[RMDB]
RNA sequence: GGGAACGACUCGAGUAGAGUCGAAAAGCAGGGCAGUCGCCCUAAAACAAAGUUAGGCAUCACAAAGUACAGCAUCGUGACCAACAGCAACGAUUCCGUCACACUGCGCCUCAUGACUGAGCAUGACCCACGGGAGGAAGUUCGCUUCCUCCCGUGGAAAAGAAACAACAACAACAAC
Reactivity to 2A3 in 0.01 (KOAc 150mM, MgCl2 10mM, bicine 150mM(pH8.5), 24C), signal-to-noise 1, nucleotides 027 to 126: g110c060a030g020g000g000c040a050g110u190c120g000c020c000c000u000a000a010a010a000c060a000a160a000g030u060u070a040g040g000c000a040u060c030a060c030a060a040a000g080u060a120c030a020g000c010a020u030c050g040u060g100a060c040c030a010a080c050a030g120c030a010a090c060g050a080u040u060c040c020g000u050c000a000c010a000c020u110g030c020g030c010c000u000c000a060u060g050a030c030u050g010a030g100c050a050u130g040a080c000
Reactivity to DMS in 0.01 (KOAc 150mM, MgCl2 10mM, bicine 150mM(pH8.5), 24C), signal-to-noise 2, nucleotides 027 to 126: g020c140a020g040g010g000c110a130g020u000c170g000c060c010c000u000a020a020a110a070c090a060a070a100g000u000u000a080g010g030c040a110u000c060a020c090a040a020a110g040u000a170c040a070g010c070a070u000c060g020u000g000a100c040c030a140a100c100a110g010c100a080a010c060g000a130u020u000c130c090g000u010c040a080c080a090c070u000g010c030g010c020c020u000c130a100u000g010a100c070u000g010a000g000c040a040u000g000a060c160
The record gives the reactivity of an RNA of 177 nucleotides to 2A3 and DMS. Values are in units of 0.01, from 0 to 300, in steps of 10. 2A3 adducts were read by reverse transcription with SuperScript II with manganese. The RNA was probed in 150 mM KOAc, 10 mM MgCl2 and 150 mM bicine (pH 8.5) at 24 C. 2A3 is a SHAPE reagent: it acylates the 2'-hydroxyl of flexible nucleotides of all four kinds. It was measured as part of the RMDB library OK2TRN.